[RMDB]
RNA sequence: GGGAACGACUCGAGUAGAGUCGAAAAGCUGCUGCUACUAUUAUAGCGCACGGCAGUAUUCAAGAUGGGCGAAGUAUGUUGGAGAAGAGAGAGGAAAAUGUCAAGAACAAAACCUCCUCCUGGAAGCCCCCGUCACUUAAAGCGGUGAGCCCAGCCAUCAUAUGAUUCUUUUCGAAGAAUCAUAUGAAAAAGAAACAACAACAACAAC
Reactivity to 2A3 in 0.01 (KOAc 150mM, MgCl2 10mM, bicine 150mM(pH8.5), 24C), signal-to-noise 3, nucleotides 027 to 156: g000c000u000g000c020u030g030c000u090a050c030u040a130u300u120a240u250a090g040c080g010c030a030c050g040g000c000a000g020u040a110u100u240c110a110a060g060a140u160g000g000g040c040g050a070a010g060u060a110u180g060u020u020g030g020a080g020a160a030g010a030g060a010g000a000g020g070a070a110a020a000u060g020u010c060a130a050g030a240a100c000a000a050a030a020c000c000u000c000c000u000c000c000u020g000g030a060a020g030c020c060c000c000c000g040u030c020a050c080u100u180a130a070a040g020c020g040g050u080g050a020g020c000c010c000a000g000c000c000a020
Reactivity to DMS in 0.01 (KOAc 150mM, MgCl2 10mM, bicine 150mM(pH8.5), 24C), signal-to-noise 2, nucleotides 027 to 156: g010c010u000g030c010u000g010c010u000a060c020u000a160u020u010a160u000a030g050c060g010c140a050c060g000g050c000a040g010u010a120u010u020c060a070a070g000a150u000g000g000g030c000g050a150a040g000u000a090u000g010u000u000g000g000a130g000a150a100g020a040g010a100g040a070g040g000a070a070a120a230u010g030u000c030a100a160g000a100a120c020a030a030a090a300c000c040u000c010c010u000c030c050u010g000g010a140a130g020c020c020c020c000c000g010u010c010a100c100u000u040a060a060a230g020c080g010g030u010g010a090g010c000c030c010a110g000c040c010a210